[RMDB]
RNA sequence: GGGAACGACUCGAGUAGAGUCGAAAAGAUAUGGAUCCCAUUGCUUCGAGGAUCUCGGAAACGAGGGAGAAGGAUGCGGAUCCUAAGUCAAAACACCUCACAACCGCUUCGGCGGUUGUGAGGUGAAGGAUUAGAUACGGUUCGCCGUAUCUAAUCCAAAAGAAACAACAACAACAAC
Reactivity to DMS in 0.01 (KOAc 150mM, MgCl2 10mM, bicine 150mM(pH8.5), 24C), signal-to-noise 2, nucleotides 027 to 126: g000a030u010a300u000g000g000a010u010c010c000c010a010u000u000g000c010u000u000c000g020a100g020g000a030u010c000u000c000g020g000a110a120a260c000g000a030g000g000g010a040g010a040a020g000g000a000u010g000c150g030g000a010u000c000c000u010a000a080g000u020c040a050a110a150a180c010a010c000c000u000c020a000c000a000a000c000c000g000c020u000u020c240g030g070c010g000g000u020u020g010u000g010a000g010g020u000g010a030a050
Reactivity to 2A3 in 0.01 (KOAc 150mM, MgCl2 10mM, bicine 150mM(pH8.5), 24C), signal-to-noise 2, nucleotides 027 to 126: g040a010u130a020u220g040g000a000u000c040c010c000a020u000u080g300c010u000u000c000g090a250g050g000a010u010c000u030c030g000g000a110a060a020c020g010a010g000g020g020a010g030a010a020g010g000a020u020g040c190g100g030a000u000c000c000u000a070a010g050u000c020a030a020a130a150c030a010c000c000u000c040a000c010a000a020c050c000g010c160u160u150c300g180g000c030g000g060u020u000g010u000g050a000g010g000u000g000a010a010